RNA sequence: GGGAACGACUCGAGUAGAGUCGAAAAUCAACCAUUAGUCAAUGCUUAUCUUGUGCUUUUCAAAUACCUAGGUAUUAAACCCGUAGCACAUCCUGUAUUGGAUUUUCUAACAUCCGAUCGAGCAUGCCCUAUUCAAACACAGCAAGAUAAUACCCGCGAUAAAAAUCCGAUUCGUCGGAUUUUUAUCAAAAGAAACAACAACAACAAC
Reactivity to 2A3 in 0.01 (KOAc 150mM, MgCl2 10mM, bicine 150mM(pH8.5), 24C), signal-to-noise 3, nucleotides 027 to 156: u060c000a000a020c010c090a080u020u160a030g110u060c050a070a070u030g020c000u060u090a110u150c050u030u090g020u020g030c020u090u160u070u120c060a050a180a130u150a120c050c030u140a100g060g100u060a080u120u160a110a100a080c020c060c100g050u080a020g000c000a010c000a050u020c020c050u080g050u190a050u020u000g020g000a000u030u040u090u070c070u090a120a050c010a040u000c000c000g000a020u010c020g000a000g030c010a020u070g010c010c000c000u090a110u030u150c120a060a030a030c030a010c040a130g100c030a050a070g050a070u060a100a010u090a190c100c020c070g050c070